[RMDB]
RNA sequence: GGGAACGACUCGAGUAGAGUCGAAAAUACAAGAAGGGGGGACGGAGAAGGCUAUGUUGGCCGGGCGACGGUUGUCCCGGUUUAAGCGUGUAGGCAGGUUUUCCAGGCAAAUCCGGAAGAAAAUGAACCUACAAUCUUGUUUCGACAAGAUUGUAGGAAAAGAAACAACAACAACAAC
Reactivity to DMS in 0.01 (KOAc 150mM, MgCl2 10mM, bicine 150mM(pH8.5), 24C), signal-to-noise 2, nucleotides 027 to 126: u000a110c080a080a100g010a100a070g000g000g000g000g000g010a090c050g010g010a060g010a060a120g020g020c050u000a050u000g010u000u000g010g010c010c020g010g000g020c300g020a050c150g020g000u020u020g010u010c010c000c010g010g000u000u010u000a060a090g000c060g010u000g010u010a030g000g000c050a060g010g020u000u000u000u000c000c010a160g000g010c110a020a060a080u010c040c020g000g010a080a040g000a030a060a110a120u000g010a100a140
Chemical mapping of a 177-nucleotide RNA with DMS.
It was measured as part of the RMDB library M2PK90.